[RMDB]
Conditions: 150 mM KOAc, 10 mM MgCl2 and 150 mM bicine (pH 8.5), 24 C.
This 177-nucleotide RNA was probed chemically with DMS and 2A3.
As a SHAPE reagent, 2A3 marks flexible, mostly unpaired nucleotides at the ribose 2'-OH.
For 2A3, 1,336 sequencing reads were counted.
It was measured as part of the RMDB library OK2TST.
For DMS the reverse transcriptase was MarathonRT.
RNA sequence: GGGAACGACUCGAGUAGAGUCGAAAACUUCCCGCCGAGGUGGUGGCGAAGCUCGAGUUCUUCAACCCUCUCUCGAGCGUGAAGGACAGGAUAGGUCUUUCCAUGGUAGUGGAGGCCGAGAAAGAAGGUCCGAUAUCCUAUUCGUAGGAUAUCGGACAAAAGAAACAACAACAACAAC
Reactivity to DMS in 0.01 (KOAc 150mM, MgCl2 10mM, bicine 150mM(pH8.5), 24C), signal-to-noise 3, nucleotides 027 to 126: c110u000u000c000c030c000g030c030c010g010a030g000g010u000g000g030u010g050g010c300g010a070a040g020c060u010c170g020a110g020u020u000c030u000u000c020a030a300c100c020c010u000c010u020c000u000c000g030a120g010c050g030u000g010a020a030g000g000a100c100a100g010g000a120u010a060g020g000u000c010u000u000u000c010c000a070u000g020g050u010a150g010u010g010g010a060g000g010c010c010g000a140g010a080a090a100g020a140a120g030
Reactivity to 2A3 in 0.01 (KOAc 150mM, MgCl2 10mM, bicine 150mM(pH8.5), 24C), signal-to-noise 1, nucleotides 027 to 126: c000u010u000c000c020c040g000c010c010g010a010g050g010u020g040g060u100g010g030c000g010a010a000g020c020u090c180g200a110g060u190u040c000u020u000c010a050a050c010c000c020u010c000u010c000u010c010g050a090g030c000g010u010g050a010a000g000g070a020c060a050g080g030a090u150a130g040g000u020c000u040u080u000c020c000a010u090g300g000u260a300g050u030g020g010a030g060g060c000c020g000a030g080a010a060a000g150a060a020g040